[RMDB]
Overview:
The record gives the reactivity of an RNA of 207 nucleotides to 2A3. Source: RMDB library M2RFPK, as collected in RNAgym. For 2A3, 1,603 sequencing reads were counted. The reactions ran in a buffer of 150 mM KOAc, 10 mM MgCl2 and 150 mM bicine (pH 8.5), at 24 C.
RNA sequence: GGGAACGACUCGAGUAGAGUCGAAAACAGAGCUGAUGGGCCAUGUACCUAUCCAAAAUGAGAUCCCAUCUUGCACACUGUGCUAAUUUGAGAUUCUCAUGGCUCCUACUUGGAGAGAUCUGGACUACUAACUGUAUGACGUUCGCGUCAUACAGAAGUAACUUCUGAGCUUCGGCUCAGAAGUUACAAAAGAAACAACAACAACAAC
Reactivity to 2A3 in 0.01 (KOAc 150mM, MgCl2 10mM, bicine 150mM(pH8.5), 24C), signal-to-noise 3, nucleotides 027 to 156: c010a000g000a010g020c020u010g010a010u020g020g000g020c070c060a150u160g030u110a050c000c010u010a060u040c010c010a020a030a010a160u020g000a000g000a020u010c000c000c000a010u010c030u020u050g010c010a010c040a070c170u300g010u010g020c040u120a090a070u020u000u040g050a040g000a030u300u010c000u000c000a010u020g030g000c000u020c000c000u140a240c090u150u290g000g000a000g000a010g000a010u020c010u020g000g030a040c030u100a040c000u030a230a110c010u010g010u000a000u020g000a010c010g020u020u020c160g000c010g130u010c000a000u010a010c000a000g010a040a020